[RMDB]
RNA sequence: GGGAACGACUCGAGUAGAGUCGAAAAUUUACGGUAUUCGUACCGUAAACGAGCAAGCAAGCAGCGCAACGAGACAAGACGAUAAUAAGAUCGAGCAUGCUGAUAGUAGGAUCUUCGGAUCCUACAACUUAUGGGCUAGUUUCGACUAGCCCAUAAGAAAAGAAACAACAACAACAAC
Reactivity to DMS in 0.01 (KOAc 150mM, MgCl2 10mM, bicine 150mM(pH8.5), 24C), signal-to-noise 4, nucleotides 027 to 126: u000u000u010a000c000g000g020u000a010u010u010c170g040u000a020c000c010g010u020a000a010a030c140g000a150g020c130a080a090g010c100a070a050g000c020a050g010c090g010c040a050a050c040g010a090g010a080c100a040a050g010a140c090g000a060u010a060a120u020a100a120g000a080u000c040g010a120g010c030a060u000g010c050u000g000a050u010a070g000u000a000g000g010a010u000c000u000u010c170g010g000a010u000c000c000u000a000c010a050a110
Description:
An RNA of 177 nucleotides, treated with DMS and read out base by base. Values cover nucleotides 27 to 126. For DMS, 3,180 sequencing reads were counted. Conditions: 150 mM KOAc, 10 mM MgCl2 and 150 mM bicine (pH 8.5), 24 C.